Source: RMDB library TTRINS, as collected in RNAgym.
Structure probing data (DMS and 2A3) for a 177-nucleotide construct.
As a SHAPE reagent, 2A3 marks flexible, mostly unpaired nucleotides at the ribose 2'-OH.
2A3 adducts were read by reverse transcription with SuperScript II with manganese.
RNA sequence: GGGAACGACUCGAGUAGAGUCGAAAAGAUAUGGACCUCGCGGUUCGAGCAUGAGAGGAAUCUUAGUCGGAAACGACUAAGAUUCUACCCACCUCAUGAACUACUCGAACUGAGAGGUCCUAAGUCACACCUUUAAAGGGUUCGCCCUUUAAAGGUGAAAAGAAACAACAACAACAAC
Reactivity to DMS in 0.01 (KOAc 150mM, MgCl2 10mM, bicine 150mM(pH8.5), 24C), signal-to-noise 3, nucleotides 027 to 126: g030a040u000a300u030g000g010a000c000c000u010c010g000c020g020g000u000u000c010g000a010g010c000a020u000g000a020g000a200g030g000a030a010u000c000u000u000a000g000u000c010g030g000a150a120a260c020g010a010c000u000a000a000g010a010u000u000c000u000a030c090c090c100a300c120c010u000c000a010u000g000a060a030c070u020a300c010u010c000g020a010a020c010u010g000a040g010a000g000g010u000c000c010u000a000a050g010u000c020a300
Reactivity to 2A3 in 0.01 (KOAc 150mM, MgCl2 10mM, bicine 150mM(pH8.5), 24C), signal-to-noise 2, nucleotides 027 to 126: g020a000u120a070u160g010g010a000c020c010u030c000g110c030g040g000u000u000c000g000a000g010c010a000u010g010a000g040a020g050g030a000a000u000c000u010u000a000g010u020c040g040g090a150a110a110c000g000a010c000u000a000a000g010a000u000u040c000u010a000c060c010c010a060c020c010u010c000a000u010g010a040a040c150u300a050c010u300c010g010a000a000c000u050g000a010g020a000g000g010u000c000c010u010a000a000g000u000c000a010
In probing experiments dimethyl sulfate is read out at A N1 and C N3, which are open when not base-paired.